RNA sequence: GGGAACGACUCGAGUAGAGUCGAAAAGAAACACCAGCGCCCAGGAAGAAAAACUUGAAAGUGAACUACUUGACGAAACACGAACGCUGGUGUAAAUCGUCAAGAAGCAGAAAGAAAAGAAAGAAAAAUCAUCACUACGGUUCGCCGUAGUGAUGAUAAAAGAAACAACAACAACAAC
Reactivity to DMS in 0.01 (KOAc 150mM, MgCl2 10mM, bicine 150mM(pH8.5), 24C), signal-to-noise 1, nucleotides 027 to 126: g000a040a020a100c020a010c000c000a040g000c070g000c190c070c000a190g020g000a120a110g000a020a140a180a070a040c070u000u000g000a090a060a080g070u000g020a060a160c030u000a120c000u000u000g000a000c000g000a000a040a110c080a020c070g010a010a130c120g050c010u000g000g030u030g000u020a010a020a090u000c000g000u000c040a000a040g000a170a070g000c150a050g000a070a130a050g000a110a100a030a020g010a180a120a000g080a020a120a060a040